[RMDB]
RNA sequence: GGGAACGACUCGAGUAGAGUCGAAAAAGGUUGGAAUGCAAACUGGAAGAGUUAGUCAUCAAGAUGGCCGAAGGCAUGGAAGGUAAAUUAUCCGAUUUUGAGGACAUGAAUAUUAGCGACAUGGAUAUUUCGGACCUAAAAGGUUUCGAUAUAUCUAGCAUUAGGGAUGGUUCGCCAUCCCUAAUGCAAAAGAAACAACAACAACAAC
Reactivity to 2A3 in 0.01 (KOAc 150mM, MgCl2 10mM, bicine 150mM(pH8.5), 24C), signal-to-noise 1, nucleotides 027 to 156: a000g060g000u020u020g000g000a010a040u160g000c140a160a000a000c000u050g000g000a020a080g020a060g050u100u030a000g070u070c010a020u000c000a090a050g000a160u110g040g000c000c000g080a010a000g020g020c020a000u020g000g050a050a030g050g000u060a040a130a050u090u090a050u010c040c030g020a130u060u070u030u140g030a030g000g000a000c000a010u060g100a070a000u150a160u290u060a040g000c030g090a080c060a150u130g020g000a000u000a020u100u000u000c000g000g000a000c000c010u070a080a080a000a000g050g030u000u000u300c010g000a000u000a000u000a000u000c030u010a080
This 207-nucleotide RNA was probed chemically with 2A3. 2A3 adducts were read by reverse transcription with SuperScript II with manganese.